[RMDB]
RNA sequence: GGGAACGACUCGAGUAGAGUCGAAAAGACUAAGAAAAUUAGGGUUUUUUAUUUUUGGUUUUUGAUAAAGAGAAAGAUGCCUCUUCUUUCAGCAGCAAGAUUAUUCUUGUUAGCUUUGUUCUGGAGGCUACUUUUUCAAGUUCGCUUGAAAAAGUAGAAAAGAAACAACAACAACAAC
Reactivity to DMS in 0.01 (KOAc 150mM, MgCl2 10mM, bicine 150mM(pH8.5), 24C), signal-to-noise 2, nucleotides 027 to 126: g000a020c020u010a050a060g000a070a050a050a060u020u030a090g010g030g010u000u020u020u030u020u030a040u040u020u010u000u010g010g000u000u000u000u000u000g000a150u020a060a090a110g000a110g000a030a010a060g000a070u020g000c000c010u000c010u010u010c020u000u000u000c040a080g000c020a030g000c010a000a010g000a050u010u060a120u060u000c000u000u000g010u010u000a080g000c000u010u000u000g000u000u020c070u000g000g000a010g000g000
Reactivity to 2A3 in 0.01 (KOAc 150mM, MgCl2 10mM, bicine 150mM(pH8.5), 24C), signal-to-noise 2, nucleotides 027 to 126: g020a010c020u040a080a000g100a090a190a100a120u230u240a080g040g050g060u150u090u090u040u120u150a130u080u090u010u030u050g070g000u040u030u060u000u130g110a060u080a160a100a020g140a010g000a020a000a000g020a010u060g000c010c000u000c020u090u010c000u010u020u020c020a020g000c000a000g000c010a000a000g000a020u100u120a060u300u100c000u000u010g000u010u040a020g010c000u070u070u170g040u050u050c120u200g080g000a000g030g000